The record gives the reactivity of an RNA of 177 nucleotides to 2A3 and DMS. The RNA was probed in 150 mM KOAc, 10 mM MgCl2 and 150 mM bicine (pH 8.5) at 24 C. As a SHAPE reagent, 2A3 marks flexible, mostly unpaired nucleotides at the ribose 2'-OH. Values cover nucleotides 27 to 126. 2A3 adducts were read by reverse transcription with SuperScript II with manganese. The DMS profile rests on 3,801 reads.
RNA sequence: GGGAACGACUCGAGUAGAGUCGAAAAAAUGCAGCAACUGCCACUGCAUAAGGGAAGGCGGCGAAAGGCUGACUCUAGAAGACAGAGUCUACAACUGCAAUAGAUGCGGUAUGCAGUUAGACAGAGAGCUCUAAUAAAUCUUCGGAUUUAUUAGAGCAAAAGAAACAACAACAACAAC
Reactivity to 2A3 in 0.01 (KOAc 150mM, MgCl2 10mM, bicine 150mM(pH8.5), 24C), signal-to-noise 3, nucleotides 027 to 126: a000a000u070g000c010a030g030c030a040a080c040u070g030c010c000a010c010u010g000c000a030u040a070a070g060g000g010a040a040g050g000c010g000g020c080g090a070a030a020g130g000c050u020g020a010c000u000c000u010a080g030a220a020g030a070c070a020g070a020g080u020c010u010a030c040a100a010c010u040g000c010a020a080u020a140g170a130u110g070c030g030g020u030a050u070g000c010a000g000u020u030a060g010a040c020a010g210a020g060a010
Reactivity to DMS in 0.01 (KOAc 150mM, MgCl2 10mM, bicine 150mM(pH8.5), 24C), signal-to-noise 4, nucleotides 027 to 126: a050a030u010g000c030a050g010c080a060a080c050u010g010c030c100a210c030u000g010c020a040u000a100a090g000g000g000a090a130g010g020c030g010g000c030g000a080a090a090g000g020c090u000g010a120c010u010c010u000a060g010a120a070g010a080c120a020g010a070g020u000c000u000a090c160a070a030c010u000g010c010a040a100u010a100g000a110u000g010c050g000g000u000a100u000g010c000a010g000u000u000a030g000a080c050a110g000a120g010a140